[RMDB]
RNA sequence: GGGAACGACUCGAGUAGAGUCGAAAAACGGCUGGCUACGGCCAGCCGAAUCGGGCCAAAGGCAGUCGCCCGACGACACAGGCGAUCGUUCGCCCAAGCGCUGCACACGACUAUACGUAGUCGUGAACAUAGUUUCCAUAUUCGUAUGGAAACUAUGAAAAGAAACAACAACAACAAC
Reactivity to 2A3 in 0.01 (KOAc 150mM, MgCl2 10mM, bicine 150mM(pH8.5), 24C), signal-to-noise 9, nucleotides 027 to 126: a000c000g000g000c000u010g010g000c010u040a070c270g110g000c000c000a000g000c010c000g000a000a000u010c000g010g010g000c020c050a110a120a110g110g010c030a020g040u060c030g010c000c000c000g010a010c010g010a000c010a010c030a110g220g020c030g020a040u050c050g110u080u040c050g220c010c010c000a040a040g030c040g010c060u050g000c030a020c000a000c030g010a000c000u010a010u050a110c300g120u010a010g000u000c000g000u000g010a010a000
Reactivity to DMS in 0.01 (KOAc 150mM, MgCl2 10mM, bicine 150mM(pH8.5), 24C), signal-to-noise 6, nucleotides 027 to 126: a090c010g000g000c020u000g000g030c010u000a110c210g030g030c000c000a010g010c010c000g010a010a010u000c010g010g000g010c020c180a060a110a150g010g010c040a020g020u010c180g010c010c000c000g000a040c030g000a040c070a100c120a140g000g000c030g010a080u000c070g000u000u000c050g020c020c010c150a060a050g000c090g000c030u000g000c030a300c020a010c000g000a010c010u000a050u020a150c190g030u000a010g000u000c000g010u000g000a090a200